RNA sequence: GGGAACGACUCGAGUAGAGUCGAAAAAAGGCGAGCUCGGGGGAUCAGGGGAGCCCCCCGUGCUUCCUGCGCUUCCCGCGGCCUGUGCGGGUGGUAAGUGGCGCCGAGGCCGAGCUCAAGUGCGUGGAAAGAAUGCAAAGUUCGCUUUGCAUUCUUUAAAAGAAACAACAACAACAAC
Reactivity to DMS in 0.01 (KOAc 150mM, MgCl2 10mM, bicine 150mM(pH8.5), 24C), signal-to-noise 4, nucleotides 027 to 126: a080a040g000g010c170g010a020g010c000u000c010g000g010g010g010g000a100u010c110a120g010g010g010g010a270g010c170c000c010c010c010c010g010u000g010c010u000u000c030c020u000g000c080g000c110u000u000c010c020c010g010c030g010g000c030c020u000g010u010g020c030g010g020g020u010g000g000u010a080a120g010u000g010g000c030g010c010c090g000a090g000g000c010c010g010a090g000c050u000c090a070a090g010u010g010c040g000u000g010g010
Reactivity to 2A3 in 0.01 (KOAc 150mM, MgCl2 10mM, bicine 150mM(pH8.5), 24C), signal-to-noise 3, nucleotides 027 to 126: a010a010g060g020c040g020a010g010c000u010c010g020g010g010g000g000a020u050c090a120g030g010g030g030a020g040c020c000c010c000c010c000g000u000g000c000u020u010c000c010u020g020c050g010c010u030u010c020c000c000g000c020g000g000c010c020u070g060u140g080c050g060g030g050u050g050g060u140a160a120g090u080g160g000c020g000c010c010g010a030g010g020c020c010g020a010g010c020u060c080a110a070g070u070g080c030g020u080g040g080